[RMDB]
Chemical mapping of a 207-nucleotide RNA with 2A3. The data come from the RNA Mapping Database (RMDB), library PDB130. 2A3 adducts were read by reverse transcription with SuperScript II with manganese. The RNA was probed in 150 mM KOAc, 10 mM MgCl2 and 150 mM bicine (pH 8.5) at 24 C.
RNA sequence: GGGAACGACUCGAGUAGAGUCGAAAAACCUUACAGAAGGAGAGUCAGAACUUGUAUCAGGCUUUAACGUAGAAUAUGCAGCCGGACCUUUCGCCAUAUUCUUCAUAGCAGAAUAUGCCAACAUCAUCAUAAUAAAUGCAUUUACAGCAAUUCUCUUUCGAUAUACUAACUUCGGUUAGUAUAUCGAAAAAGAAACAACAACAACAAC
Reactivity to 2A3 in 0.01 (KOAc 150mM, MgCl2 10mM, bicine 150mM(pH8.5), 24C), signal-to-noise 5, nucleotides 027 to 156: a000c010c000u020u090a060c040a050g060a060a010g020g020a040g010a020g040u040c030a020g030a120a100c040u100u080g020u060a070u090c050a030g040g000c020u090u080u120a100a020c060g020u020a010g030a070a020u070a020u110g000c020a010g040c040c000g040g030a110c040c050u090u190u140c060g000c020c000a010u010a020u020u000c000u040u050c050a120u140a090g010c020a000g070a080a040u090a020u100g030c040c010a030a060c020a050u100c010a010u050c010a020u080a260a020u090a110a210a050u080g010c010a030u010u110u190a110c050a020g030c020a030a060u010u000c000u000c000u000u000